[RMDB]
RNA sequence: GGGAACGACUCGAGUAGAGUCGAAAAAGCAAGUAGGUGGGUGCUGCCGUGUGCUCGCUUGAAAUACAGAUGCAUGUCGUGUUCCCAGGUGAUCGCGAUGCCGCCGUGCAACUGUAUGCCCUCGGCGGAGGGUCAUCCCAUUCGUGGGAUGACCCUCAAAAGAAACAACAACAACAAC
Reactivity to DMS in 0.01 (KOAc 150mM, MgCl2 10mM, bicine 150mM(pH8.5), 24C), signal-to-noise 1, nucleotides 027 to 126: a050g030c020a080a030g050u010a050g030g030u000g000g020g040u000g000c050u000g000c060c080g000u000g000u010g070c050u000c090g030c120u000u040g000a070a130a050u000a050c010a040g030a130u000g000c000a010u040g000u040c060g060u010g020u000u000c020c000c100a130g000g000u000g000a090u010c030g050c140g040a100u060g000c000c010g000c020c000g000u000g000c030a040a060c030u010g000u000a040u010g000c010c050c000u000c000g000g010c120g010
Reactivity to 2A3 in 0.01 (KOAc 150mM, MgCl2 10mM, bicine 150mM(pH8.5), 24C), signal-to-noise 2, nucleotides 027 to 126: a000g170c080a100a000g050u030a070g020g080u040g030g020g000u040g000c030u020g040c000c060g100u060g010u040g010c020u010c060g000c000u010u130g110a080a050a000u030a010c040a000g040a010u020g040c030a040u050g020u060c040g000u050g030u070u090c000c010c000a000g110g050u110g100a070u060c060g000c020g050a060u120g060c030c010g000c010c000g000u020g000c000a060a090c030u060g020u050a070u080g040c000c000c080u040c010g030g060c060g070